[RMDB]
RNA sequence: GGGAACGACUCGAGUAGAGUCGAAAACUGCUGAAGCUGCCAUGUCUAAGAAGAAAACUUUGGAGAAAAAUUUUCUUCUUAGACAUGGCAACGUCAACAGAAACGUCACCAACUUCGGUUGGUGACGGGUUAUGAUUUUGUUCGCAAAAUCAUAACCAAAAGAAACAACAACAACAAC
Reactivity to 2A3 in 0.01 (KOAc 150mM, MgCl2 10mM, bicine 150mM(pH8.5), 24C), signal-to-noise 1, nucleotides 027 to 126: c010u000g010c010u000g010a020a010g000c010u010g000c010c000a000u000g000u000c000u000a000a000g000a000a000g020a010a030a030a030c080u090u170u190g190g050a300g280a180a080a020a000a010u000u050u010u010c000u000u030c000u000u000a010g000a000c010a010u000g000g000c090a000a000c010g000u000c000a010a010c000a000g070a070a110a020c010g000u000c000a000c000c000a020a000c000u050u060c280g090g000u000u020g010g000u000g000a000c000g000
Reactivity to DMS in 0.01 (KOAc 150mM, MgCl2 10mM, bicine 150mM(pH8.5), 24C), signal-to-noise 1, nucleotides 027 to 126: c010u000g020c020u010g010a010a030g010c040u000g000c000c000a000u000g000u000c000u000a000a010g010a030a010g000a030a010a020a020c080u000u010u000g000g040a240g010a060a020a000a030a030u000u000u000u000c000u010u010c000u000u010a000g000a000c000a000u000g000g000c000a000a000c000g000u000c000a000a000c010a030g010a110a070a300c020g010u000c000a000c000c000a000a000c000u010u010c210g020g020u000u000g000g000u000g010a000c000g000

Structure probing data (2A3 and DMS) for a 177-nucleotide construct.
The DMS profile rests on 1,727 reads.
Reactivities are given for positions 27 through 126.
It was measured as part of the RMDB library RFMREP.
For 2A3 the reverse transcriptase was SuperScript II with manganese.
DMS adducts were read by reverse transcription with MarathonRT.